[RMDB]
RNA sequence: GGGAACGACUCGAGUAGAGUCGAAAAAGCGACCGCGCUCCGGUCACGUUCGGGGAUCUGCUGGGCCGGCUGCCCCGCUACCUGGCGUGCCUGGCCGCGGUGAUCGGGACCGAGGGCGGCCGGCCACUAAAGUCGACAAAUUCGUUUGUCGACUUUAAAAAGAAACAACAACAACAAC
Reactivity to 2A3 in 0.01 (KOAc 150mM, MgCl2 10mM, bicine 150mM(pH8.5), 24C), signal-to-noise 2, nucleotides 027 to 126: a010g100c040g000a030c000c020g040c010g010c060u010c010c020g050g030u060c030a010c070g130u220u200c010g040g020g000g040a130u050c050u120g010c030u150g050g050g000c000c000g000g000c010u010g000c000c000c030c000g030c030u190a230c000c000u010g080g000c000g020u060g020c000c000u020g040g000c030c010g010c010g010g000u060g010a050u140c050g020g010g070a050c020c020g020a240g000g000g020c000g010g000c010c000g000g000c000c000a000c000
Reactivity to DMS in 0.01 (KOAc 150mM, MgCl2 10mM, bicine 150mM(pH8.5), 24C), signal-to-noise 3, nucleotides 027 to 126: a080g000c020g010a090c020c020g010c140g020c070u000c030c050g010g000u030c050a040c050g010u000u030c040g010g000g010g000a120u020c080u010g030c100u030g000g010g000c000c000g030g000c000u010g000c020c000c020c050g020c070u000a060c040c020u000g010g000c070g020u010g000c030c000u000g010g010c300c030g000c060g000g010u020g000a070u020c050g000g000g000a190c300c010g000a090g000g000g030c000g010g010c000c000g000g010c000c010a010c030